[RMDB]
RNA sequence: GGGAACGACUCGAGUAGAGUCGAAAAACAAGCAAUGAACAAUGCUGAUACCGCAUCAACCCAAAGCUUUGGUGCUAUUACAGGUCAAUUUGAGCCUUAUACUCAAAAUACUGGUUAUAACACUAGACAGCCAUGAUUUAUUCGUAAAUCAUGGCUGAAAAGAAACAACAACAACAAC
Reactivity to DMS in 0.01 (KOAc 150mM, MgCl2 10mM, bicine 150mM(pH8.5), 24C), signal-to-noise 3, nucleotides 027 to 126: a060c140a130a100g030c020a060a060u000g000a080a100c130a150a060u000g020c010u010g010a160u020a100c150c130g020c090a030u020c050a100a050c020c020c010a120a080a140g020c090u000u000u010g010g020u000g000c010u000a010u000u000a030c010a030g000g000u000c180a060a060u000u000u000g000a010g010c070c170u000u010a060u010a190c010u020c000a020a010a030a030u000a050c010u010g000g000u000u000a010u000a020a020c020a010c010u000a050g010a240
Reactivity to 2A3 in 0.01 (KOAc 150mM, MgCl2 10mM, bicine 150mM(pH8.5), 24C), signal-to-noise 1, nucleotides 027 to 126: a020c050a010a000g060c020a020a130u180g050a110a040c030a110a100u080g000c020u030g030a070u080a150c000c090g000c040a040u000c000a010a140c030c000c000a050a070a000g030c030u120u090u110g020g000u010g010c020u000a000u080u070a030c020a020g000g090u070c070a100a120u020u000u020g000a010g020c020c000u120u140a080u100a060c010u000c010a030a010a010a030u100a040c010u010g000g000u020u030a050u040a040a030c010a000c030u000a030g040a110